[RMDB]
RNA sequence: GGGAACGACUCGAGUAGAGUCGAAAAGGCCUACAAUUAACAACUGGAGUGAGUUUAAUUGUUGAUUCGAUAUCUAAGGUCACAUGCAAGAUGUCUGUGAUGUCUUACAGCUACUUUCUACCUGAUGGUUAUCCGUUGUGUUCGCACAACGGAUAACAAAAGAAACAACAACAACAAC
Reactivity to DMS in 0.01 (KOAc 150mM, MgCl2 10mM, bicine 150mM(pH8.5), 24C), signal-to-noise 1, nucleotides 027 to 126: g040g120c020c000u000a110c170a150a040u020u000a040a100c130a160a020c000u000g050g020a090g020u000g000a130g050u050u010u000a040a170u000u000g030u000u000g060a100u020u020c050g050a100u050a150u000c030u020a110a030g000g040u000c020a130c040a110u000g000c040a060a050g000a010u010g000u000c000u010g060u000g000a020u000g000u000c010u000u000a070c120a020g000c000u030a240c000u000u000u000c080u000a060c000c030u020g030a150u100g000
Reactivity to 2A3 in 0.01 (KOAc 150mM, MgCl2 10mM, bicine 150mM(pH8.5), 24C), signal-to-noise 4, nucleotides 027 to 126: g080g010c000c000u030a040c030a060a030u150u090a040a010c030a010a040c080u070g080g030a040g090u180g020a030g020u040u010u150a090a080u050u070g000u040u070g030a220u130u170c060g030a050u070a060u050c020u050a090a050g040g000u040c010a030c000a030u060g000c060a090a050g030a240u030g020u020c040u060g090u080g030a050u020g050u040c020u030u080a040c020a020g020c000u010a050c030u070u040u060c010u010a160c040c010u060g030a090u130g070